[RMDB]
RNA sequence: GGGAACGACUCGAGUAGAGUCGAAAACUCGUCCUUGCGCAGUUCCAUGGCUGCGGACGCCAGUUGCACCACCAGCACGUCGCCAAAGCGAUCGACCACCAGGCCGGGCAGCAGGUCGGAAUCGCCAGGACGUCAUUUAUUUCGAUAAAUGACGUCCAAAAGAAACAACAACAACAAC
Reactivity to DMS in 0.01 (KOAc 150mM, MgCl2 10mM, bicine 150mM(pH8.5), 24C), signal-to-noise 2, nucleotides 027 to 126: c040u000c080g000u000c040c040u010u010g000c100g000c040a040g000u010u010c070c130a130u000g020g020c020u010g010c050g000g020a060c100g020c110c050a060g010u000u000g010c060a110c000c040a100c060c060a010g020c020a050c060g040u000c050g030c070c080a070a130a170g010c040g010a070u000c060g000a080c010c010a100c080c020a110g000g030c000c030g000g020g020c010a070g000c030a060g030g000u000c030g010g010a070a070u000c000g020c020c060a170
Reactivity to 2A3 in 0.01 (KOAc 150mM, MgCl2 10mM, bicine 150mM(pH8.5), 24C), signal-to-noise 2, nucleotides 027 to 126: c020u020c010g030u060c000c010u040u140g030c050g030c030a060g020u110u060c080c060a090u220g080g000c020u040g010c000g040g010a020c030g020c030c020a060g020u070u040g000c050a060c050c000a020c020c010a020g020c020a010c050g010u020c010g010c000c020a100a040a070g030c020g030a040u060c030g030a040c000c000a050c020c000a020g040g000c000c000g050g010g050c020a040g030c000a010g000g060u050c000g000g040a030a060u030c040g010c010c020a000